[RMDB]
RNA sequence: GGGAACGACUCGAGUAGAGUCGAAAACAUGAAAAUCUAUCAAGCACGAUCCGACCAAACCCACAGCCGAUUCGGUCCGCGAGCGGGAAGUCAAUGCGUCUCCAACUGUUUUCUGUACCUGCACGCCCUUCACCUGAAGGGCGCGCACACCACGCUCGACUUGAUGCUUAUUCGUAAGCAUCAAGUCAAAAGAAACAACAACAACAAC
Reactivity to 2A3 in 0.01 (KOAc 150mM, MgCl2 10mM, bicine 150mM(pH8.5), 24C), signal-to-noise 3, nucleotides 027 to 156: c030a060u150g050a030a050a040a060u100c090u110a090u090c070a050a030g030c030a020c050g030a040u060c010c020g050a060c000c040a110a050a060c020c010c030a040c020a020g050c040c020g090a090u100u070c050g040g030u010c050c050g070c030g070a020g010c040g000g020g030a060a000g050u050c040a040a040u090g020c020g030u010c010u000c040c040a060a060c030u030g030u070u020u050u010c050u050g030u040a080c000c010u020g000c000a000c010g010c000c000c000u030u020c050a210c180c080u110g000a010a000g000g000g000c000g000c000g010c000a020c000a000c000c020a050c020g030c040u080c040
The record gives the reactivity of an RNA of 207 nucleotides to 2A3. The 2A3 profile rests on 1,961 reads. The reactions ran in a buffer of 150 mM KOAc, 10 mM MgCl2 and 150 mM bicine (pH 8.5), at 24 C. It was measured as part of the RMDB library OK3TST.